RNA sequence: GGGAACGACUCGAGUAGAGUCGAAAACAGAGCUAAUGAGCCACAUACCUACCCAAGGUGAAAGCUCCUUCUCUCGCAAUGUGUAACUCAUGGUUCUCAUGACCCCUGGUUGGAGAGAUCCGGACUAUAGACUAGAGGGUGUUCGCACCCUCUAGAAGAUCAAGUAAAUCUUCGGAUUUACUUGAUCAAAAGAAACAACAACAACAAC
Reactivity to 2A3 in 0.01 (KOAc 150mM, MgCl2 10mM, bicine 150mM(pH8.5), 24C), signal-to-noise 4, nucleotides 027 to 156: c030a000g020a000g010c010u100a300a080u070g020a000g060c060c000a020c010a030u140a040c010c030u030a090c010c040c020a070a060g010g000u040g060a130a070a000g010c020u070c010c020u100u050c040u020c030u040c030g070c090a060a070u040g020u010g020u110a060a040c010u010c030a020u030g050g000u080u070c080u030c050a080u180g070a150c000c000c000c040u050g070g000u070u040g050g010a040g010a010g010a060u010c040c010g030g010a030c020u060a050u140a300g080a060c000u000a000g000a000g000g000g000u000g010u030u010c070g030c020a000c010c000c000u010c000u010a000g000a000a000
Reactivity to DMS in 0.01 (KOAc 150mM, MgCl2 10mM, bicine 150mM(pH8.5), 24C), signal-to-noise 2, nucleotides 027 to 156: c080a040g000a060g040c010u000a070a050u000g000a070g050c080c010a050c030a080u000a080c020c010u000a110c030c060c070a170a090g020g010u010g000a110a130a150g010c070u000c050c020u000u000c040u010c040u010c060g020c060a140a070u000g020u010g000u000a030a020c020u000c010a040u010g000g000u000u000c020u000c030a120u000g010a150c080c020c000c060u010g000g030u000u010g020g000a150g000a150g000a130u010c020c020g000g030a070c040u000a170u000a090g010a200c030u000a010g000a020g000g000g040u020g000u000u000c300g020c000a020c000c000c000u000c000u000a000g000a030a080